[RMDB]
RNA sequence: GGGAACGACUCGAGUAGAGUCGAAAAGGGCCGCGGUGCUCUGGAGUAGAGGCUCUGCCUUCGAAACACCAUCGAUCGUCCCUUCUUCUUUACCUUCUUCUGGCUCUUCCGAUGAGACGCGACCGGUGGCAUCACCUCUCGGUUCGUCCCAACCUGCGAACUAGGUUUGGUUCGCCAAACCUAGUUCAAAAGAAACAACAACAACAAC
Reactivity to 2A3 in 0.01 (KOAc 150mM, MgCl2 10mM, bicine 150mM(pH8.5), 24C), signal-to-noise 3, nucleotides 027 to 156: g000g000g010c010c000g050c000g040g000u000g000c000u000c000u000g000g020a010g020u010a010g010a000g020g000c040u070c270u300g070c040c010u170u150c010g010a010a000a000c010a030c160c010a000u020c010g100a300u050c000g000u000c010c000c000u000u010c020u040u020c000u020u100u100a110c020c020u050u080c020u120u010c010u100g030g000c020u040c000u100u000c020c010g080a090u090g050a030g020a020c040g020c080g070a010c000c010g040g000u020g020g000c050a110u100c040a070c020c000u000c040u080c000g000g000u030u030c000g000u000c020c000c010a060a090c020c020u060g020c070